[RMDB]
RNA sequence: GGGAACGACUCGAGUAGAGUCGAAAAGAUAUGGAAUUCGAUCGAGUAGUCAUGUUAGCAUCGAUCGAACUGUAUCGGAAACGAUAUUUCGGGAGCUACGUGACUACUCGAUCGAAUUCCUAAGUCACAUUGAAGUGGACUUCGGUCCACUUCAAUGAAAAGAAACAACAACAACAAC
Reactivity to DMS in 0.01 (KOAc 150mM, MgCl2 10mM, bicine 150mM(pH8.5), 24C), signal-to-noise 2, nucleotides 027 to 126: g010a050u000a300u010g000g030a020a040u000u000c000g010a010u010c010g030a020g010u000a010g010u000c040a020u000g000u020u040a030g010c000a300u000c200g010a100u020c000g040a000a010c300u000g020u000a000u010c000g000g000a200a130a280c000g000a000u000a010u010u000u000c000g010g000g010a020g030c010u020a000c020g000u000g000a060c010u000a000c000u000c000g000a000u000c020g000a000a000u000u000c000c010u000a020a060g010u000c020a190